[RMDB]
RNA sequence: GGGAACGACUCGAGUAGAGUCGAAAAUACGUGUGUGUGAAGAUGUGUUUGCAUGUAUGUGAGCAUGUGUGUAUAUAUGUGCAUGCACACGUGUGCAUUGUGCAUGCCGGUGUGCUACAUGAAUGUGUGUGUGUAUGUUCACAUGCGUGUUCACGUAACGCUAUAGGAUGUUCGCAUCCUAUAGCGUAAAAGAAACAACAACAACAAC
Reactivity to 2A3 in 0.01 (KOAc 150mM, MgCl2 10mM, bicine 150mM(pH8.5), 24C), signal-to-noise 7, nucleotides 027 to 156: u250a050c100g010u060g010u030g000u010g020u030g070a060a040g040a180u070g030u020g040u070u060u070g050c070a040u050g010u060a020u050g010u020g010a010g010c010a020u000g020u000g010u010g040u030a010u010a020u010a020u270g070u070g040c000a010u030g010c000a010c010a000c010g040u060g040u050g040c000a040u070u150g030u040g020c010a020u030g030c030c030g040g020u070g010u030g020c040u060a010c010a060u090g090a190a030u070g020u010g010u010g000u000g000u000g000u020a020u050g020u030u040c030a010c000a010u020g010c010g010u010g000u000u010c010a000c000g000u070a060
Reactivity to DMS in 0.01 (KOAc 150mM, MgCl2 10mM, bicine 150mM(pH8.5), 24C), signal-to-noise 1, nucleotides 027 to 156: u000a070c070g010u010g020u000g030u000g020u000g000a060a060g020a100u000g020u010g000u010u010u000g010c050a060u000g020u010a080u000g040u010g040a070g020c020a030u020g040u000g020u000g030u010a080u000a050u000a050u000g030u000g000c000a040u000g030c010a000c020a020c070g030u000g010u000g010c030a090u010u020g020u000g000c020a010u000g030c050c080g000g020u010g030u000g040c020u000a060c030a030u000g020a060a060u000g000u010g010u020g010u000g020u000g030u020a050u010g020u000u000c010a020c010a060u000g010c050g010u000g020u000u000c010a030c040g000u010a080